[RMDB]
RNA sequence: GGGAACGACUCGAGUAGAGUCGAAAAGCGUACUACAAGCGAGGUGCUCUAAGCGAUGCCUACCCACCUGGUCCCAAAUAGGACCAGAGGGCAUCGAACGCGAGCACUACCCACCGCUUGUAUCGCAAAGUCCAAUUUCUGUUCGCAGAAAUUGGACGCAUCUAUGGCUGUUCGCAGCCAUAGAUGCAAAAGAAACAACAACAACAAC
Reactivity to 2A3 in 0.01 (KOAc 150mM, MgCl2 10mM, bicine 150mM(pH8.5), 24C), signal-to-noise 7, nucleotides 027 to 156: g020c010g020u110a100c040u010a000c030a010a000g000c000g010a020g010g010u010g000c010u000c020u060a100a050g040c000g010a000u000g000c000c010u070a130c080c050c010a030c000c000u000g000g020u030c020c010c020a180a300a140u300a100g000g000a000c000c000a000g010a010g000g000g000c000a000u000c010g000a080a020c040g010c050g020a000g000c000a000c000u000a010c020c010c020a060c020c000g000c000u020u010g000u010a030u300c010g000c030a050a070a040g000u000c000c000a000a000u000u000u000c010u010g050u020u070c270g000c140a000g000a000a000a000u000u000g000g000a000c000
Reactivity to DMS in 0.01 (KOAc 150mM, MgCl2 10mM, bicine 150mM(pH8.5), 24C), signal-to-noise 3, nucleotides 027 to 156: g010c010g020u000a040c090u000a020c010a000a040g010c010g000a100g050g010u000g010c000u000c010u010a200a120g000c020g010a040u000g000c000c000u000a050c030c010c040a300c100c010u000g010g000u010c000c000c000a060a180a190u010a050g010g010a020c000c000a020g000a070g000g000g020c000a020u000c010g000a020a070c050g000c170g020a010g030c000a010c010u020a020c000c010c000a300c120c010g020c010u000u000g010u000a010u000c020g040c010a080a090a130g000u000c000c000a020a010u000u000u000c010u010g030u010u000c280g010c000a010g010a000a000a030u010u010g000g010a000c010